[RMDB]
RNA sequence: GGGAACGACUCGAGUAGAGUCGAAAAUCGGUUGUUUCUCUGAAGGCAUGAUCAUCCCGUCCGAUGCGGAAGUUCGUGCUUCCGUCGAACGCGAAAGUCGGACGGCGGCCAUGAGUCGCAACGCAAAUAUACAUUUAGUAGUUCGCUACUAAAUGAACGGAAUAGAACCGUUCGCGGUUCUAUUCCGAAAAGAAACAACAACAACAAC
Reactivity to 2A3 in 0.01 (KOAc 150mM, MgCl2 10mM, bicine 150mM(pH8.5), 24C), signal-to-noise 1, nucleotides 027 to 156: u120c030g010g040u000u010g000u020u030u000c010u000c040u070g150a250a150g060g040c040a070u050g040a050u140c020a040u110c030c000c000g000u000c000c000g000a000u000g000c010g010g010a000a020g040u170u300c180g200u300g090c000u000u000c000c000g040u020c010g080a120a030c140g030c000g230a090a030a010g030u010c020g010g000a030c000g000g000c040g040g000c000c000a010u070g010a070g100u020c040g000c010a010a090c020g000c110a000a120a000u110a000u030a060c000a000u000u000u000a000g000u000a000g010u040u020c280g000c060u010a000c000u000a010a010a010u020g010a060a040
Description
This 207-nucleotide RNA was probed chemically with 2A3. The reactions ran in a buffer of 150 mM KOAc, 10 mM MgCl2 and 150 mM bicine (pH 8.5), at 24 C. Reactivities are given for positions 27 through 156. The data come from the RNA Mapping Database (RMDB), library M2RFPK.